[RMDB]
RNA sequence: GGGAACGACUCGAGUAGAGUCGAAAACUGCUCAUGUGCGGGCAUUGCCGGCGCUUCAUCCGCCAGAUGCGCCUGACCCAGGCGACCGUGCGCCAUCUGCCGGAAGGGCAGGGGCCGGAACUCGACCAAAGGGGGGAAAAUUCGUUUUCCCCCCUUUAAAAGAAACAACAACAACAAC
Reactivity to 2A3 in 0.01 (KOAc 150mM, MgCl2 10mM, bicine 150mM(pH8.5), 24C), signal-to-noise 1, nucleotides 027 to 126: c010u000g060c000u050c020a130u240g020u120g120c040g020g000g000c030a070u000u280g090c020c020g000g020c040g000c060u040u020c010a090u000c010c010g010c040c000a010g010a020u040g000c010g000c010c020u080g060a110c010c000c000a000g020g000c000g010a010c010c010g020u030g030c080g070c000c020a110u020c040u020g090c080c010g100g070a080a020g130g000g000c030a010g070g000g000g000c000c000g000g010a020a020c040u020c010g000a010c050c000
Reactivity to DMS in 0.01 (KOAc 150mM, MgCl2 10mM, bicine 150mM(pH8.5), 24C), signal-to-noise 3, nucleotides 027 to 126: c100u020g010c010u000c030a070u010g020u010g050c080g000g010g000c060a050u030u030g020c020c050g020g020c030g020c050u000u010c040a100u040c040c000g020c100c020a050g000a020u000g000c030g010c000c020u000g010a170c010c020c030a240g000g000c030g000a070c050c010g000u010g000c080g010c060c020a060u020c010u000g010c150c030g000g010a140a100g010g000g010c030a040g000g000g000g000c000c040g000g010a080a090c050u030c050g010a150c150c060